An RNA of 177 nucleotides, treated with DMS and read out base by base.
The reactions ran in a buffer of 150 mM KOAc, 10 mM MgCl2 and 150 mM bicine (pH 8.5), at 24 C.
High DMS reactivity at an A or C suggests that its Watson-Crick edge is free.
DMS adducts were read by reverse transcription with MarathonRT.

[RMDB]
RNA sequence: GGGAACGACUCGAGUAGAGUCGAAAAUCACUGCUCAGAGAAGGUGAUGUAUGAGCUGAAAGGUGGGUGGUAAGAAGGAACCUGUCCUUGAAAGAGUUAAGGGAAGGAGAUGACCUCAAAGGAGGAAUGCCUUCAGGAAGUUCGCUUCCUGAAGGCAAAAAGAAACAACAACAACAAC
Reactivity to DMS in 0.01 (KOAc 150mM, MgCl2 10mM, bicine 150mM(pH8.5), 24C), signal-to-noise 1, nucleotides 027 to 126: u000c010a130c070u000g000c090u000c070a090g010a210g030a160a080g000g010u020g010a120u000g000u010a050u020g030a100g000c100u000g010a080a030a080g000g010u010g010g040g000u000g010g020u000a040a080g000a090a120g000g000a070a040c050c050u010g000u000c010c040u000u000g010a050a040a100g000a140g010u010u000a070a100g010g010g010a050a030g010g000a120g000a080u010g010a150c030c000u000c030a030a040a130g000g000a030g030g010a060a150